RNA sequence: GGGAACGACUCGAGUAGAGUCGAAAAGGGCACCCACAAUAGGAUGGCAGGAGGGGACUGCGGGUCCGUCGUUCCAUCCUUUUCUUACCUUGUGGCCGGCAUGGCCCCAGCCUCCUCGCUGGCGCCGCAUCAGUAUGGUGUUCGCACCAUACUGAUGAAAAGAAACAACAACAACAAC
Reactivity to DMS in 0.01 (KOAc 150mM, MgCl2 10mM, bicine 150mM(pH8.5), 24C), signal-to-noise 3, nucleotides 027 to 126: g020g010g030c120a130c050c000c020a090c190a090a070u010a090g010g010a040u010g000g010c060a020g000g000a050g010g010g000g010a020c000u000g020c240g030g000g000u000c020c300g000u000c020g010u000u000c010c010a050u000c050c050u000u000u010u020c110u000u000a100c060c080u010u020g000u000g030g010c300c020g000g020c000a030u010g010g010c000c030c010c010a020g000c060c030u000c020c010u000c020g000c020u020g000g000c050g000c010c020g030
Reactivity to 2A3 in 0.01 (KOAc 150mM, MgCl2 10mM, bicine 150mM(pH8.5), 24C), signal-to-noise 2, nucleotides 027 to 126: g060g020g040c030a050c010c040c010a030c030a020a100u170a080g000g050a110u050g040g100c010a010g000g020a000g020g010g000g000a000c000u010g030c080g020g000g040u040c040c020g010u010c000g030u120u060c000c000a040u070c030c000u050u010u060u030c030u030u090a080c010c010u040u140g030u030g040g020c030c020g010g020c050a110u130g010g000c000c000c000c000a000g000c000c010u040c000c000u010c020g090c040u010g040g050c000g030c000c020g020
Structure probing data (DMS and 2A3) for a 177-nucleotide construct. For DMS the reverse transcriptase was MarathonRT. Conditions: 150 mM KOAc, 10 mM MgCl2 and 150 mM bicine (pH 8.5), 24 C. The DMS profile rests on 2,688 reads.